[RMDB]
RNA sequence: GGGAACGACUCGAGUAGAGUCGAAAAGAGGAGCCCGCAGGUGGGAGGAUCAGCCACCGGAGGGGACGCGAUGCCAAAGAGUGGGGGAAAUCUCGCGAGGGAAAUCCCAAGAAGGUCGAGAAGUCUCAGGGCGUACGGUUCGCCGUACGCAAAAGAAACAACAACAACAAC
Reactivity to DMS in 0.01 (KOAc 150mM, MgCl2 10mM, bicine 150mM(pH8.5), 24C), signal-to-noise 3, nucleotides 027 to 129: g010a000g040g050a090g000c060c030c030g000c100a060g040g000u040g050g040g000a030g000g000a000u000c130a130g030c000c080a000c070c050g020g010a160g010g060g000g010a070c150g000c000g020a000u030g010c060c110a080a120a070g010a040g040u130g000g020g050g000g000a010a040a100u040c050u060c050g030c190g010a110g050g020g020a070a080a160u010c040c020c020a090a120g020a070a040g020g020u080c000g000a100g020a050a080g010u010c070u030c010a080g010g030
Reactivity to 2A3 in 0.01 (KOAc 150mM, MgCl2 10mM, bicine 150mM(pH8.5), 24C), signal-to-noise 2, nucleotides 027 to 129: g090a000g010g060a010g030c030c040c020g020c040a040g050g060u060g040g010g020a020g050g010a000u030c020a000g060c020c030a040c020c030g000g020a000g020g050g000g000a020c030g010c010g030a050u100g070c030c020a020a060a030g110a040g030u130g020g030g000g000g010a000a010a060u010c020u010c000g000c020g020a110g010g000g000a010a020a060u040c000c000c000a000a050g010a020a000g010g000u030c020g010a000g010a120a020g020u000c030u040c050a040g030g040